Notes:
Chemical mapping of a 207-nucleotide RNA with 2A3. The 2A3 profile rests on 1,242 reads. Conditions: 150 mM KOAc, 10 mM MgCl2 and 150 mM bicine (pH 8.5), 24 C. For 2A3 the reverse transcriptase was SuperScript II with manganese.

RNA sequence: GGGAACGACUCGAGUAGAGUCGAAAACGACCACCUGACGGGUCGGACAUAGCGUCAGGAUCAUCCGUGUCAGUCACCACGGUAAUCAUGUGACUGAUGAUGGUUUUCCAUCUUAAUCUGACUGGGUCGUAGCAGUCUACAGUACUAUGACAUUAGACCAUGAGGUACCUUUCGAGGUACCUCAUGGAAAAGAAACAACAACAACAAC
Reactivity to 2A3 in 0.01 (KOAc 150mM, MgCl2 10mM, bicine 150mM(pH8.5), 24C), signal-to-noise 2, nucleotides 027 to 156: c020g010a030c010c000a010c000c000u000g000a000c000g000g020g030u010c050g150g070a070c060a060u210a040g110c000g000u030c000a010g010g000a000u030c010a010u030c000c000g000u020g000u020c010a000g010u010c000a000c000c000a000c000g000g060u050a050a060u090c050a020u050g010u010g010a020c050u000g100a010u040g010a000u000g000g070u060u130u200u000c000c000a000u010c010u030u110a180a120u140c100u100g000a010c000u000g000g000g000u000c000g000u000a000g000c010a010g000u040c200u120a100c080a070g050u030a080c010u010a010u030g010a000c000a010u030u070a050g030a040